[RMDB]
RNA sequence: GGGAACGACUCGAGUAGAGUCGAAAAUACAUCCGGCAGCGGUGAGGUAAGGCAAACCACGGUUUGGAGGGUGGUUCUCGGCUGAGACCGCCGCGAGCUCUAUCUCCGGUCCAAAAUAAAAAUUUAAGACUAUAAAGAGUUUCGACUCUUUAUAGUCAAAAGAAACAACAACAACAAC
Reactivity to DMS in 0.01 (KOAc 150mM, MgCl2 10mM, bicine 150mM(pH8.5), 24C), signal-to-noise 3, nucleotides 027 to 126: u010a150c160a100u020c030c020g000g020c100a130g010c040g010g040u000g020a090g010g000u010a050a140g010g010c030a090a060a070c000c010a060c090g010g010u000u000u010g060g020a080g010g000g020u000g010g000u000u000c050u000c080g010g010c110u010g010a100g000a050c050c040g000c010c020g010c080g010a100g000c040u000c060u010a070u000c040u010c020c000g000g020u000c020c030a050a080a060a110u020a010a060a070a120a100u010u000u020a060a220
Reactivity to 2A3 in 0.01 (KOAc 150mM, MgCl2 10mM, bicine 150mM(pH8.5), 24C), signal-to-noise 2, nucleotides 027 to 126: u110a010c020a050u050c020c010g030g060c010a010g020c060g020g000u090g080a050g040g030u070a110a050g040g000c030a050a010a020c010c000a010c060g050g110u150u140u200g110g030a060g020g080g000u010g000g020u050u010c040u030c070g110g010c050u070g010a030g090a010c010c010g000c020c000g020c030g010a030g020c030u000c010u050a120u060c020u000c020c020g000g030u020c020c020a000a130a000a130u270a070a040a050a010a020u140u200u140a130a060